[RMDB]
RNA sequence: GGGAACGACUCGAGUAGAGUCGAAAAGAACACGCCAGAAAGAGGCUUUCCUCCUCCAAAUUCAAAUAGGACAGAACAGUUCGGCCGCAGUUUGUCUGAGGCAAGGAGUACUGUACUAUAUUUUUGAUGACACAUAGUUGUUCGCAACUAUGUGUCAAAAAGAAACAACAACAACAAC
Reactivity to 2A3 in 0.01 (KOAc 150mM, MgCl2 10mM, bicine 150mM(pH8.5), 24C), signal-to-noise 1, nucleotides 027 to 126: g020a020a020c060a010c150g000c020c040a020g140a030a120a000g300a080g000g000c000u010u040u030c010c000u010c010c000u030c010c030a050a150a000u260u160c020a230a010a000u020a000g000g020a000c000a010g010a080a070c010a000g020u070u060c000g040g010c020c010g050c000a000g050u280u300u300g200u300c020u010g030a040g000g000c010a030a040g040g000a040g000u040a020c010u020g010u000a010c000u000a010u020a070u110u070u010u010u070g030a090
Reactivity to DMS in 0.01 (KOAc 150mM, MgCl2 10mM, bicine 150mM(pH8.5), 24C), signal-to-noise 2, nucleotides 027 to 126: g030a110a100c150a060c150g020c010c010a040g000a060a150a230g020a090g010g030c010u000u010u000c010c000u000c000c020u010c000c020a100a090a120u010u010c150a060a120a050u000a000g000g000a010c000a020g000a140a000c020a050g000u000u000c040g010g000c010c000g000c000a020g010u010u030u010g020u040c000u000g000a020g000g010c010a010a300g000g010a020g020u000a100c000u010g010u000a010c010u000a000u000a030u000u000u000u010u000g020a240